[RMDB]
RNA sequence: GGGAACGACUCGAGUAGAGUCGAAAAGAAAGAAAGAAUCGUCUUUAGACCGGCGUAGACCGGUGCUAUCUCGGGCAGUAAUUGUCAUUGCUGCCAUUAAGAAGUCGUUAUUGCAUUUAGCUUGAAAACCAACUUAGUAAUUCGUUACUAAGUUGGUAAAAGAAACAACAACAACAAC
Reactivity to 2A3 in 0.01 (KOAc 150mM, MgCl2 10mM, bicine 150mM(pH8.5), 24C), signal-to-noise 9, nucleotides 027 to 126: g060a020a060a000g120a030a100a000g110a020a110u100c050g040u000c060u010u070u030a030g010a040c000c000g000g000c100g120u180a050g040a110c000c000g010g010u020g030c010u020a080u070c030u010c000g020g010g000c000a000g010u040a010a030u140u180g200u200c160a030u010u020g000c000u010g000c000c010a010u020u040a020a020g040a040a010g010u010c010g030u050u070a100u090u170g020c040a050u050u070u170a060g020c020u020u110g070a060a080a010
Reactivity to DMS in 0.01 (KOAc 150mM, MgCl2 10mM, bicine 150mM(pH8.5), 24C), signal-to-noise 9, nucleotides 027 to 126: g010a060a070a070g010a070a100a110g000a130a120u010c080g000u000c010u000u000u000a070g000a050c010c000g000g000c030g020u010a090g010a110c000c000g010g020u000g010c030u000a050u000c030u000c040g020g000g010c010a010g010u000a010a020u010u030g010u020c200a180u000u000g000c000u000g000c000c000a050u010u020a060a100g010a080a090g010u000c030g010u000u000a080u000u000g010c070a110u010u010u010a090g010c050u000u010g010a090a080a110
Description:
This 177-nucleotide RNA was probed chemically with 2A3 and DMS. The data come from the RNA Mapping Database (RMDB), libraries RFM100 and RFMREP. DMS adducts were read by reverse transcription with MarathonRT.